[RMDB]
RNA sequence: GGGAACGACUCGAGUAGAGUCGAAAACAAAACCAGAAUGAAGACAUCAAUAAACGAAAGUAUUUCUGGUUGUCUUCUUCCUUACCUGAAAAUAAAUAACAUCGAUAGGAUGGCGACCACUACCAUACAGUAGUAUCGGAUUCGUCCGAUACUACUGAAAAGAAACAACAACAACAAC
Reactivity to DMS in 0.01 (KOAc 150mM, MgCl2 10mM, bicine 150mM(pH8.5), 24C), signal-to-noise 4, nucleotides 027 to 126: c120a110a080a080a070c080c070a080g000a040a040u020g000a070a050g010a050c090a020u000c010a070a060u010a080a100a050c080g000a080a070a150g000u000a090u010u010u000c100u000g010g010u000u010g010u000c040u000u000c010u000u000c010c040u010u010a080c050c020u010g000a060a040a070a070u000a040a040a090u000a070a070c120a050u000c030g000a100u020a060g000g000a030u010g010g000c070g000a040c040c040a050c060u010a080c080c060a070u000a120
Reactivity to 2A3 in 0.01 (KOAc 150mM, MgCl2 10mM, bicine 150mM(pH8.5), 24C), signal-to-noise 5, nucleotides 027 to 126: c030a000a080a000a030c020c010a020g050a030a070u140g020a030a030g050a060c020a050u050c040a050a200u140a230a120a030c080g050a160a050a060g070u080a160u030u060u050c050u050g000g000u020u040g000u010c000u000u020c000u040u060c000c000u100u090a080c000c030u070g090a040a050a080a040u220a070a110a040u180a100a050c030a050u070c040g140a120u120a100g120g000a020u010g040g000c010g040a030c010c060a050c050u080a060c030c010a060u090a200

The record gives the reactivity of an RNA of 177 nucleotides to DMS and 2A3. The DMS profile rests on 3,122 reads. The 2A3 profile rests on 4,658 reads. For 2A3 the reverse transcriptase was SuperScript II with manganese. Conditions: 150 mM KOAc, 10 mM MgCl2 and 150 mM bicine (pH 8.5), 24 C. The data come from the RNA Mapping Database (RMDB), library OK2TST. Reactivities are given for positions 27 through 126.